RNA sequence: GGGAACGACUCGAGUAGAGUCGAAAAGAUAUGGACCUGCGUGCGAGCCUAUCGGAAACGAUGAGGCGAUGAGCACCAGGUCCUAAGUCAAUAGCUUCUAGGCGAUCUUCGGAUCGCCUAGAAGCAAGUCCUAUACACGGUUCGCCGUGUAUAGGACAAAAGAAACAACAACAACAAC
Reactivity to DMS in 0.01 (KOAc 150mM, MgCl2 10mM, bicine 150mM(pH8.5), 24C), signal-to-noise 3, nucleotides 027 to 126: g020a040u000a300u000g000g000a020c020c000u000g000c230g030u000g010c000g000a200g010c000c000u000a060u000c000g010g000a080a120a170c010g010a020u000g010a020g010g010c000g010a070u010g000a260g000c000a000c000c000a000g000g010u000c000c000u000a010a050g000u000c040a120a110u000a140g000c000u000u010c000u030a000g010g010c000g020a000u000c010u010u000c190g010g000a020u000c000g000c000c000u000a000g000a000a000g000c000a010a030
Reactivity to 2A3 in 0.01 (KOAc 150mM, MgCl2 10mM, bicine 150mM(pH8.5), 24C), signal-to-noise 2, nucleotides 027 to 126: g010a010u080a030u160g010g000a010c000c000u070g040c090g120u000g020c020g020a030g000c010c000u010a000u000c010g030g050a120a060a030c010g000a040u200g300a050g000g000c050g030a300u120g040a030g000c010a020c000c000a010g000g000u000c010c000u000a000a020g000u000c000a010a140u110a110g000c000u000u000c000u020a010g050g010c030g000a000u050c000u050u170c300g090g000a020u020c030g000c000c000u000a000g000a000a000g000c000a000a000

The record gives the reactivity of an RNA of 177 nucleotides to DMS and 2A3. DMS adducts were read by reverse transcription with MarathonRT. 2A3 adducts were read by reverse transcription with SuperScript II with manganese. The 2A3 profile rests on 2,927 reads. Conditions: 150 mM KOAc, 10 mM MgCl2 and 150 mM bicine (pH 8.5), 24 C.